[RMDB]
RNA sequence: GGGAACGACUCGAGUAGAGUCGAAAAACGUGAUCGAUGCCGAUACCGCGCAGCUCAUUGCCGAGGAAUUCGGCCAUACUGUCAAGCGCGUUGCUGAAUCGGACGUGGAAGAAGGCAUCUUCGACGACCCUCCACUGACUUUCGAGUCAGUGGAGGGAAAAGAAACAACAACAACAAC
Reactivity to DMS in 0.01 (KOAc 150mM, MgCl2 10mM, bicine 150mM(pH8.5), 24C), signal-to-noise 2, nucleotides 027 to 126: a080c040g040u000g020a100u000c150g020a050u010g000c010c010g000a150u000a110c060c030g000c010g020c030a180g010c130u010c100a060u010u000g020c000c000g010a000g060g020a160a130u000u000c020g010g010c010c190a060u000a080c120u000g000u010c180a090a120g020c030g000c120g020u030u000g010c060u000g020a150a060u010c070g010g010a100c020g010u000g010g020a090a060g000a060a100g000g010c140a030u020c010u000u000c030g000a010c030g000a260
Reactivity to 2A3 in 0.01 (KOAc 150mM, MgCl2 10mM, bicine 150mM(pH8.5), 24C), signal-to-noise 2, nucleotides 027 to 126: a000c030g030u070g030a010u070c080g000a000u040g030c040c000g010a050u070a090c000c030g000c010g000c010a040g000c050u090c170a010u030u030g000c020c010g010a010g080g300a300a140u200u010c000g000g000c010c010a040u080a060c010u060g080u120c040a070a060g000c000g000c070g130u090u200g050c040u060g070a090a060u170c080g070g020a020c000g000u020g060g000a100a060g020a020a030g040g020c020a010u000c000u020u020c020g060a020c000g090a050
Conditions: 150 mM KOAc, 10 mM MgCl2 and 150 mM bicine (pH 8.5), 24 C. An RNA of 177 nucleotides, treated with DMS and 2A3 and read out base by base. The 2A3 profile rests on 1,679 reads. For DMS, 1,613 sequencing reads were counted. For DMS the reverse transcriptase was MarathonRT.